[RMDB]
The record gives the reactivity of an RNA of 207 nucleotides to 2A3 and DMS. 2A3 adducts were read by reverse transcription with SuperScript II with manganese. For DMS, 7,068 sequencing reads were counted.

RNA sequence: GGGAACGACUCGAGUAGAGUCGAAAAGUUAUGGCAAAUGUUUUUUGAGCUGUGAUUAUUGAGAAUGGGGGCUGAAGUUCAACAUGUAGUUGGCAUGAGGGAAGUAAUUAUGAUUGAAGAAAAGAUUUGGGUGAAAUCUAGUGUUCUUCCCUGCAAACUACAGUAUGAGGUUCGCCUCAUACUGUAGAAAAGAAACAACAACAACAAC
Reactivity to 2A3 in 0.01 (KOAc 150mM, MgCl2 10mM, bicine 150mM(pH8.5), 24C), signal-to-noise 5, nucleotides 027 to 156: g030u040u060a040u120g010g000c030a050a090a120u070g070u040u080u020u030u060u110g050a030g010c030u020g030u030g050a040u040u150a070u080u170g050a070g070a100a110u100g020g010g010g010g020c020u030g020a040a010g030u050u060c020a040a020c010a030u060g010u050a050g020u050u030g020g010c040a040u060g030a030g020g000g000a010a010g010u100a030a040u060u090a050u110g050a030u040u130g040a070a070g030a050a100a030a020g060a080u060u070u120g100g010g010u060g030a020a020a000u000c000u010a030g040u030g060u130u010c000u010u010c000c000c010u010g000c030a060a040a020
Reactivity to DMS in 0.01 (KOAc 150mM, MgCl2 10mM, bicine 150mM(pH8.5), 24C), signal-to-noise 3, nucleotides 027 to 156: g010u000u000a060u000g030g030c030a070a140a100u000g010u000u010u010u020u010u010g000a190g020c010u030g010u000g010a090u000u010a130u000u010g010a140g010a100a140u010g010g020g020g010g050c030u000g010a040a100g010u000u000c020a040a080c030a080u000g030u000a060g040u000u010g020g010c050a110u000g020a080g010g010g000a040a040g020u000a050a050u000u000a100u010g010a080u000u000g010a110a150g000a120a080a100a120g000a140u000u000u000g030g020g040u000g020a080a040a040u000c020u000a090g020u010g020u000u010c020u000u000c020c010c010u000g020c070a010a050a120